[RMDB]
RNA sequence: GGGAACGACUCGAGUAGAGUCGAAAAGAUAUGGAUUCGGUACACAGGGAGAUGUAUGUCGGAAACGACAUACGGAAUUCUGGUACGGAAUCCUAAGUCAAAAGCGUGCUCCUUCGGGAGCACGCAACCUAGCUUACUACUUCGGUAGUAAGCUAGGAAAAGAAACAACAACAACAAC
Reactivity to 2A3 in 0.01 (KOAc 150mM, MgCl2 10mM, bicine 150mM(pH8.5), 24C), signal-to-noise 2, nucleotides 027 to 126: g020a030u060a040u100g030g010a000u010u050c140g270g010u050a010c300a010c010a140g060g060g120a110g000a040u060g030u020a000u000g010u000c010g030g020a040a050a070c000g020a010c000a000u010a010c010g010g000a000a000u220u130c010u020g000g020u020a020c100g010g000a000a000u000c000c000u000a090a020g060u010c050a040a010a060a180g000c000g000u010g000c010u020c000c010u040u130c300g080g000g000a000g040c000a000c000g000c010a000a000
Reactivity to DMS in 0.01 (KOAc 150mM, MgCl2 10mM, bicine 150mM(pH8.5), 24C), signal-to-noise 2, nucleotides 027 to 126: g000a050u000a300u000g000g000a000u000u000c000g010g050u000a010c000a130c010a060g010g010g000a050g000a300u020g010u000a000u000g000u000c000g020g000a110a070a170c000g010a000c000a000u000a010c000g010g000a270a190u010u000c010u010g010g000u010a020c020g000g020a000a000u010c000c000u000a000a140g000u000c020a110a120a100a220g000c000g040u000g010c000u000c000c010u010u020c210g000g000g000a000g010c030a010c000g000c000a000a010